Conditions: 150 mM KOAc, 10 mM MgCl2 and 150 mM bicine (pH 8.5), 24 C. This 177-nucleotide RNA was probed chemically with DMS and 2A3. For DMS the reverse transcriptase was MarathonRT. Source: RMDB library OK1LIB, as collected in RNAgym.
[RMDB]
RNA sequence: GGGAACGACUCGAGUAGAGUCGAAAAACGCGCAAACAACAAAGGAUGGCGCGAAGCGUUUGGCGCAUCAACGAGCGAGUGAGCGAUGACAAAUCUUCGCGAACAAGUUCGGGAUAACCGAUAUAAAGGGAUAUUCUAUCUUCGGAUAGAAUAUCCCAAAAGAAACAACAACAACAAC
Reactivity to DMS in 0.01 (KOAc 150mM, MgCl2 10mM, bicine 150mM(pH8.5), 24C), signal-to-noise 3, nucleotides 027 to 126: a050c050g040c020g000c010a140a100a100c110a100a110c180a100a130a140g000g000a060u010g000g000c000g030c010g020a120a060g000c070g010u010u030u010g040g020c030g010c090a040u000c050a090a070c040g000a040g000c000g000a260g000u000g000a300g000c010g010a010u000g010a140c300a040a140a150u050c030u000u000c000g000c000g000a180a020c030a000a190g020u020u000c000g000g020g000a060u000a130a040c030c040g000a130u060a110u020a070a110a110
Reactivity to 2A3 in 0.01 (KOAc 150mM, MgCl2 10mM, bicine 150mM(pH8.5), 24C), signal-to-noise 5, nucleotides 027 to 126: a000c030g060c000g020c050a070a130a100c040a050a100c020a150a140a020g200g030a110u140g100g000c010g000c020g040a030a000g020c010g010u060u100u200g080g010c010g000c030a060u020c010a040a130c000g020a010g020c000g000a010g010u030g010a030g010c010g020a010u010g020a050c190a060a100a020u070c020u010u000c010g000c000g020a000a010c020a020a010g000u030u000c000g000g000g020a060u100a050a080c010c010g020a030u080a010u060a180a100a010